Background: Source: RMDB library RSTRND, as collected in RNAgym. The record gives the reactivity of an RNA of 207 nucleotides to 2A3. 2A3 adducts were read by reverse transcription with SuperScript II with manganese. The 2A3 profile rests on 1,145 reads. The reactions ran in a buffer of 150 mM KOAc, 10 mM MgCl2 and 150 mM bicine (pH 8.5), at 24 C. Values cover nucleotides 27 to 156.
RNA sequence: GGGAACGACUCGAGUAGAGUCGAAAAGCGAACAACAUCGUUCCUUUCGCUCGUAAAGCGGCUCCUGUAGCUGCCUAAAAACCUCUAGCAGGUUUGAGCGGUCUAUAGCUUGACUCCGUUAAAGGCUACAGACAAACCCUCAACGGAUGCUCUAGUACGAUGCAUAUCGGUUCGCCGAUAUGCAUCGAAAAGAAACAACAACAACAAC
Reactivity to 2A3 in 0.01 (KOAc 150mM, MgCl2 10mM, bicine 150mM(pH8.5), 24C), signal-to-noise 2, nucleotides 027 to 156: g050c090g010a030a010c010a000a050c030a300u240c130g010u010u040c010c000u020u070u040c000g010c000u010c030g130u190a010a120a000g000c010g000g000c010u010c010c060u090g090u100a000g000c000u010g020c000c000u100a120a050a010a020a020c020c000u040c080u100a200g070c220a020g100g000u010u010u120g010a010g000c040g020g000u000c010u030a050u020a030g010c000u000u010g000a000c000u000c020c020g000u000u020a030a020a000g020g020c030u020a030c000a020g010a020c010a010a100a140c030c000c010u040c080a000a000c010g030g000a030u030g010c020u020c020u080a020g040u010a040